[RMDB]
RNA sequence: GGGAACGACUCGAGUAGAGUCGAAAAGUUAAGUCUGUUAAACAGUUUGUUUAUAAAUACGAGGCACAUAAAGAUCAAUUUUUAGAUGGUUUGUGUAUGUUUUGGAACUGCAAUGUGGAUAAGUAUCCCCUGUACGAUAAUUCGUUAUCGUACAGGGAAAAGAAACAACAACAACAAC
Reactivity to 2A3 in 0.01 (KOAc 150mM, MgCl2 10mM, bicine 150mM(pH8.5), 24C), signal-to-noise 4, nucleotides 027 to 126: g030u050u040a050a020g050u000c060u050g060u040u100a050a050a010c010a030g010u040u110u080g080u020u200u040a250u050a060a160a020u150a040c060g030a050g090g010c020a000c000a020u100a070a100a010g050a010u020c020a060a140u100u100u080u180u200a110g020a110u050g080g080u050u080u030g030u010g000u010a080u140g040u010u070u060u080g060g040a010a000c000u010g000c010a030a030u100g020u040g010g040a030u030a100a050g040u040a100u070c010
Reactivity to DMS in 0.01 (KOAc 150mM, MgCl2 10mM, bicine 150mM(pH8.5), 24C), signal-to-noise 5, nucleotides 027 to 126: g010u010u000a070a140g010u000c050u000g000u000u000a080a110a130c030a060g010u010u000u010g010u000u010u000a090u000a070a070a080u010a100c060g010a090g010g010c020a030c030a040u000a040a040a100g000a030u000c040a050a060u010u010u010u010u010a100g000a060u000g000g000u000u000u000g020u000g000u000a040u010g010u000u000u000u000g010g010a050a040c040u000g010c050a050a090u010g010u000g010g000a060u010a040a160g010u000a110u010c110
This 177-nucleotide RNA was probed chemically with 2A3 and DMS. It was measured as part of the RMDB library OK2TRN.